[RMDB]
RNA sequence: GGGAACGACUCGAGUAGAGUCGAAAAAAUCGGUCGCUAGUUGCGUAACAACUGUUAGUUUAAUUUUCCAAAAUUUAUUUUUCACAAUUUUUAGUUAAGAUUUUAGCUUGCCUUAAGCAGUCUUUAUCACCUCAUUUUGUUUCGACAAAAUGAGGUGAAAAGAAACAACAACAACAAC
Reactivity to 2A3 in 0.01 (KOAc 150mM, MgCl2 10mM, bicine 150mM(pH8.5), 24C), signal-to-noise 1, nucleotides 027 to 126: a000a000u300c120g050g000u080c000g020c000u010a000g020u050u020g000c000g000u040a030a030c000a000a000c000u060g100u190u220a100g000u000u000u080a030a170u000u070u110u060c060c030a000a000a000a000u140u180u070a140u020u080u150u300u300c080a000c020a020a080u000u090u000u090u000a020g020u000u000a190a000g080a250u020u050u000u200a020g000c010u000u010g050c040c000u210u040a010a010g000c000a020g020u010c000u080u060u060a300u090